[RMDB]
RNA sequence: GGGAACGACUCGAGUAGAGUCGAAAAGACACCGCGCAGAUCCCAAUGGCGGCUAAUAACGCCAAAAUAAAUGCGCGUAAAUGGCGUAAAAUAUAGACACAAUAUAAGUGAAAGGCGCCAAAGCAAACUAAAUCGCAAGAUUCGUCUUGCGAUUUAGAAAAGAAACAACAACAACAAC
Reactivity to DMS in 0.01 (KOAc 150mM, MgCl2 10mM, bicine 150mM(pH8.5), 24C), signal-to-noise 2, nucleotides 027 to 126: g020a200c150a090c250c000g050c020g040c000a040g000a130u010c010c010c010a190a260u020g020g010c000g020g030c120u010a090a090u020a170a100c020g040c000c000a020a030a030a050u000a020a100a040u000g020c020g010c000g000u000a040a050a070u000g000g020c010g000u000a010a060a070a100u000a200u000a120g000a190c020a010c030a040a080u020a090u000a060a100g010u000g000a050a180a110g000g000c010g000c000c000a010a050a150g000c130a040a090a220
Reactivity to 2A3 in 0.01 (KOAc 150mM, MgCl2 10mM, bicine 150mM(pH8.5), 24C), signal-to-noise 2, nucleotides 027 to 126: g090a050c020a010c070c080g040c000g000c020a000g020a140u020c000c000c000a020a030u010g000g010c010g030g020c010u080a220a130u170a200a070c010g000c000c000a000a050a020a030u100a000a050a000u010g010c010g010c000g000u010a030a070a050u100g000g000c010g000u030a080a220a140a000u160a020u040a040g160a020c020a000c010a120a040u200a070u080a300a090g010u050g010a030a060a060g040g010c000g000c000c010a000a030a000g080c010a060a000a030